[RMDB]
RNA sequence: GGGAACGACUCGAGUAGAGUCGAAAAUGCACGAUGUCUAAUCCAAGCAGCACGAUCGACAAAAUAUUCGUCUCGAGAUACGCGAGCUUCCUCAUCGUCAUCAAAAGAAGCUAAUUUUUCCGAAAGAUAAGUACCAAAGGAAGUGUUAUUAACACGACAGUCGAUUAAUAUUCGUAUUAAUCGACUGAAAAGAAACAACAACAACAAC
Reactivity to 2A3 in 0.01 (KOAc 150mM, MgCl2 10mM, bicine 150mM(pH8.5), 24C), signal-to-noise 9, nucleotides 027 to 156: u060g020c030a010c100g050a030u050g060u070c080u220a080a080u090c060c060a070a060g030c050a020g030c000a030c050g050a050u040c010g020a020c060a020a150a050a020u240a160u140u130c070g050u010c030u010c030g060a070g010a070u130a160c050g000c030g030a010g000c000u020u000c010c020u050c020a070u050c040g090u020c010a050u040c030a050a050a010a090g030a040a000g020c030u090a110a220u080u090u000u070u040c030c010g070a110a030a030g040a030u080a100a040g080u080a100c060c050a110a030a030g070g030a070a090g040u020g040u050u070a170u090u150a060a010c040a010c030g080a030
Reactivity to DMS in 0.01 (KOAc 150mM, MgCl2 10mM, bicine 150mM(pH8.5), 24C), signal-to-noise 4, nucleotides 027 to 156: u010g030c030a120c030g010a100u000g030u010c030u000a110a150u020c080c060a110a200g020c010a160g030c020a050c020g010a300u000c010g030a060c010a090a060a080a150u000a100u000u000c030g010u000c010u000c030g010a110g000a150u000a080c050g010c060g020a080g020c010u000u000c010c020u000c040a100u000c060g030u000c050a040u000c050a060a100a150a020g000a060a050g000c040u020a040a120u000u000u010u000u010c030c000g000a080a110a110g000a110u010a040a100g020u000a080c020c010a050a050a090g020g010a060a050g020u000g020u000u000a080u000u000a080a090c050a060c010g020a180